[RMDB]
RNA sequence: GGGAACGACUCGAGUAGAGUCGAAAAAGGGAAUUUAGGGCCAUUGUCUUUCCUUCUCCGAAGGAAGAACGGCCCUCCUCCACUGUCCAUCUCCCAUUAGCACGAUCCCUCGAGUGCAUCGAGACGAGAAUAAAUGUGACUUCGGUCACAUUUAUUCAAAAGAAACAACAACAACAAC
Reactivity to DMS in 0.01 (KOAc 150mM, MgCl2 10mM, bicine 150mM(pH8.5), 24C), signal-to-noise 4, nucleotides 027 to 126: a060g020g000g000a110a090u000u000u000a030g010g000g020c000c020a180u010u010g010u010c010u000u020u010c000c000u000u000c000u020c200c220g000a050a010g000g000a030a010g010a030a050c180g010g000c020c000c010u000c210c040u000c010c020a050c100u000g010u000c040c020a090u000c070u000c000c020c040a110u020u000a130g020c030a040c020g010a080u000c030c010c000u000c080g010a090g010u010g010c090a100u000c080g000a070g030a100c160g010a210
Reactivity to 2A3 in 0.01 (KOAc 150mM, MgCl2 10mM, bicine 150mM(pH8.5), 24C), signal-to-noise 4, nucleotides 027 to 126: a000g090g000g020a100a040u150u200u180a150g020g000g020c010c030a060u100u250g080u010c020u040u130u100c000c000u020u000c180u040c080c210g030a000a000g000g000a010a000g000a020a000c010g000g000c020c000c000u010c000c000u000c000c000a090c030u080g060u020c030c020a070u000c030u010c050c000c000a050u080u120a050g010c050a000c080g050a080u090c020c010c000u000c020g030a010g020u110g050c040a040u070c080g050a090g040a050c050g090a040